[RMDB]
RNA sequence: GGGAACGACUCGAGUAGAGUCGAAAAGGGCGAUCGCGACUUUGCGUACCACAUGCGAUGAACAUGGUGGCGCAAGGACGAGGAAAGUCCGGACUCCACAGAGCACGGUGAUUGUUAACAACAACCCACUACUAGUGCCAUUCGUGGCACUAGUAGUAAAAGAAACAACAACAACAAC
Reactivity to DMS in 0.01 (KOAc 150mM, MgCl2 10mM, bicine 150mM(pH8.5), 24C), signal-to-noise 7, nucleotides 027 to 126: g000g010g000c000g010a290u000c000g000c010g010a090c010u000u010u000g010c000g010u010a100c020c000a020c000a020u000g000c010g000a130u060g000a150a180c010a010u000g000g050u020g010g000c010g000c000a010a010g000g010a080c000g000a060g010g010a020a020a300g000u000c000c010g000g010a050c030u000c000c020a070c070a160g000a040g000c050a060c060g010g000u010g010a100u010u000g000u010u020a080a060c210a120a100c100a050a080c020c030c020
Reactivity to 2A3 in 0.01 (KOAc 150mM, MgCl2 10mM, bicine 150mM(pH8.5), 24C), signal-to-noise 4, nucleotides 027 to 126: g010g000g000c000g000a020u010c010g000c010g040a030c000u000u010u010g000c000g010u030a050c000c000a010c000a000u010g020c030g160a140u150g030a070a000c000a000u030g050g010u000g050g000c000g000c000a000a000g020g000a020c010g010a020g120g030a010a000a000g000u000c000c000g000g000a010c010u020c010c010a040c020a030g050a010g020c090a040c210g050g040u080g070a280u040u060g020u050u100a090a020c080a020a020c010a010a050c030c000c000